[RMDB]
RNA sequence: GGGAACGACUCGAGUAGAGUCGAAAACAUGGAUCAGAAGCCCUUCGGUAAUGAUGCGCCCGAUUGUCAUGUGGGGGCUCAGCGAGCCGAAUGGAUCCUGAAAAACAAGCUGCAAUUCGCGGCGUUAAUUUAGCGUCCUAUUCGUAGGACGCUAAAUAAAAGAAACAACAACAACAAC
Reactivity to 2A3 in 0.01 (KOAc 150mM, MgCl2 10mM, bicine 150mM(pH8.5), 24C), signal-to-noise 3, nucleotides 027 to 126: c030a030u090g070g000a040u040c020a030g170a250a080g110c000c030c000u010u010c010g030g000u080a170a100u090g060a020u220g000c100g200c000c000c000g040a060u110u210g270u220c090a100u190g020u140g090g030g000g030g030c000u000c010a000g030c010g130a040g000c010c000g000a020a010u010g030g010a010u000c010c000u030g070a070a100a000a000a000c050a010a020g000c000u010g000c010a030a300u300u170c090g000c020g000g000c020g030u050u070a040
Reactivity to DMS in 0.01 (KOAc 150mM, MgCl2 10mM, bicine 150mM(pH8.5), 24C), signal-to-noise 3, nucleotides 027 to 126: c080a100u000g000g000a140u000c010a060g000a090a110g000c020c000c030u010u010c030g000g010u000a130a090u010g000a030u010g010c040g000c000c000c010g010a140u000u020g010u020c200a080u000g020u010g000g010g000g000g010c010u000c010a010g000c150g030a280g000c000c000g000a030a020u000g020g000a060u000c010c000u000g000a030a080a070a100a090c160a070a110g020c000u000g010c000a150a190u010u010c200g020c010g040g000c030g010u000u000a050